[RMDB]
RNA sequence: GGGAACGACUCGAGUAGAGUCGAAAAGUGUCUUGCCGGUAUUGGUCGGCCCCAGCACCGCGGUCACGUCGCGGCCACUCAAUGUCAGCGGCAGAUCAUGGGCAGGUUGCUGGUUCAUACCAAUAAAUAUUAUGGGCGAGUUCGCUCGCCCAUAAUAAAAAGAAACAACAACAACAAC
Reactivity to DMS in 0.01 (KOAc 150mM, MgCl2 10mM, bicine 150mM(pH8.5), 24C), signal-to-noise 1, nucleotides 027 to 126: g000u010g010u010c030u000u000g020c070c010g000g000u000a040u010u020g030g020u010c050g000g020c020c250c010c030a060g000c010a040c010c010g010c090g010g000u010c010a070c180g030u000c020g040c020g030g000c030c170a110c210u020c300a100a080u020g000u000c030a100g080c010g010g000c000a100g010a030u000c030a060u000g010g020g040c000a090g000g010u000u000g020c010u000g010g010u000u020c100a100u000a040c020c000a070a080u000a020a100a130